RNA sequence: GGGAACGACUCGAGUAGAGUCGAAAAGCAGGAGUGUUCGCACUCCUGCAAAUGAAAGCGGGCAGCUCCAGGCCGCCAAACAAUAUGGAGCACAAAGUAAAGAAAGGCCUACGUUCGCGUAGGCCAAGCUUAGAUUACGGUUCGCCGUAAUCUAAGCAAAAGAAACAACAACAACAAC
Reactivity to 2A3 in 0.01 (KOAc 150mM, MgCl2 10mM, bicine 150mM(pH8.5), 24C), signal-to-noise 2, nucleotides 027 to 126: g000c010a000g000g000a000g010u010g020u060u160c160g060c080a000c000u010c000c000u000g000c000a000a000a020u100g010a050a040a000g030c020g020g040g010c010a060g000c040u000c000c000a010g000g020c000c020g000c050c030a080a070a030c070a050a040u070a080u110g010g000a000g070c000a000c000a000a060a000g190u210a060a060a040g110a060a200a020g010g000c000c000u000a010c010g030u060u090c260g000c000g060u000a000g000g000c020c000a000a000
Reactivity to DMS in 0.01 (KOAc 150mM, MgCl2 10mM, bicine 150mM(pH8.5), 24C), signal-to-noise 2, nucleotides 027 to 126: g000c000a010g000g000a020g030u000g010u000u000c130g020c020a000c000u000c000c000u030g020c000a010a020a060u020g000a060a130a180g000c010g000g000g050c050a080g010c000u010c010c000a000g010g020c000c000g000c030c140a070a110a070c020a020a010u000a190u000g020g000a010g000c000a270c300a090a080a170g000u000a040a090a090g000a090a050a160g010g020c000c000u010a000c020g000u000u010c170g000c040g030u000a000g000g000c000c010a020a010